Source information
An RNA of 207 nucleotides, treated with DMS and 2A3 and read out base by base. Reactivities are given for positions 27 through 156. DMS adducts were read by reverse transcription with MarathonRT. The RNA was probed in 150 mM KOAc, 10 mM MgCl2 and 150 mM bicine (pH 8.5) at 24 C. Source: RMDB library M2RFPK, as collected in RNAgym.
RNA sequence: GGGAACGACUCGAGUAGAGUCGAAAAGAAAGUUCAAGCAAGCUAGCCGGCAAAAAAGCAAACUUGACCACCAAGGAUAAAAGAGCUCUUAUCCAAGGAUGCAAAAGAUAAUCUCACUUUUGACACCAAAACAGGGAGUAGUUCGCUACUCCCUGAAUACUGUUGUUACCUUCGGGUAACAACAGUAAAAAGAAACAACAACAACAAC
Reactivity to DMS in 0.01 (KOAc 150mM, MgCl2 10mM, bicine 150mM(pH8.5), 24C), signal-to-noise 1, nucleotides 027 to 156: g000a110a060a130g010u000u000c060a000a120g000c030a040a250g000c040u000a230g040c030c020g000g040c030a000a070a040a080a050a010g020c020a020a070a070c020u000u000g010a160c050c030a010c000c050a070a280g000g000a080u000a010a020a120a120g000a040g030c080u000c060u000u000a010u000c000c040a070a190g000g000a060u000g000c030a030a000a030a070g010a090u000a040a130u000c060u020c030a100c050u000u000u000u000g000a210c040a050c080c010a100a020a080a100c000a020g030g000g000a040g000u000a020g020u030u010c240g070c040u010a000c000u000c000c000c000u010g010a060a040
Reactivity to 2A3 in 0.01 (KOAc 150mM, MgCl2 10mM, bicine 150mM(pH8.5), 24C), signal-to-noise 2, nucleotides 027 to 156: g090a030a080a000g020u070u050c050a030a030g010c000a100a000g000c020u040a000g040c040c090g010g040c190a100a020a000a050a010a000g020c050a050a020a030c010u010u040g020a030c030c000a010c000c010a050a030g010g000a020u040a060a040a030a040g110a030g000c010u030c000u020u040a020u020c000c010a020a020g040g000a040u020g000c040a000a000a050a000g010a040u130a160a150u100c060u050c050a050c000u100u030u030u090g080a120c020a040c040c060a020a010a050a150c010a000g000g000g000a000g000u000a000g000u020u050c090g000c090u000a000c000u030c000c000c000u000g010a000a000